An RNA of 177 nucleotides, treated with DMS and 2A3 and read out base by base.
The data come from the RNA Mapping Database (RMDB), library OK2TST.
2A3 adducts were read by reverse transcription with SuperScript II with manganese.
[RMDB]
RNA sequence: GGGAACGACUCGAGUAGAGUCGAAAAUACAGAUGCUUCGUUUUGGCAUGCUUGCAGGGCUUAGUAGGCUUGUUUGUCCUAAUGAGCUAGGAAAGAAAUUUUCAACGAGCUGUAGAAGAAUUGAAGAGUAAGCCCAUAAUUUCGAUUAUGGGCUUACAAAAGAAACAACAACAACAAC
Reactivity to DMS in 0.01 (KOAc 150mM, MgCl2 10mM, bicine 150mM(pH8.5), 24C), signal-to-noise 2, nucleotides 027 to 126: u020a130c110a150g010a100u000g020c030u000u000c030g010u010u000u000u000g010g000c060a070u010g000c020u000u000g000c100a100g000g010g030c000u000u000a020g010u000a050g000g010c030u000u000g020u000u000u000g010u010c010c000u000a020a050u000g010a020g000c040u000a100g000g000a000a020a010g000a060a110a140u000u000u000u000c000a130a300c010g020a030g020c010u000g000u000a090g010a090a090g000a020a040u000u010g020a040a060g000a200
Reactivity to 2A3 in 0.01 (KOAc 150mM, MgCl2 10mM, bicine 150mM(pH8.5), 24C), signal-to-noise 1, nucleotides 027 to 126: u190a000c040a020g100a190u120g100c000u040u020c020g080u070u000u070u130g150g000c020a000u140g040c010u040u050g040c030a050g030g120g000c020u000u000a020g050u020a020g070g010c000u020u110g110u170u250u070g010u010c000c000u000a000a040u020g000a010g040c000u060a000g050g000a020a040a010g050a030a170a050u120u080u070u050c030a050a020c010g000a000g020c000u030g050u140a090g050a230a020g030a070a110u290u130g010a060a020g030a010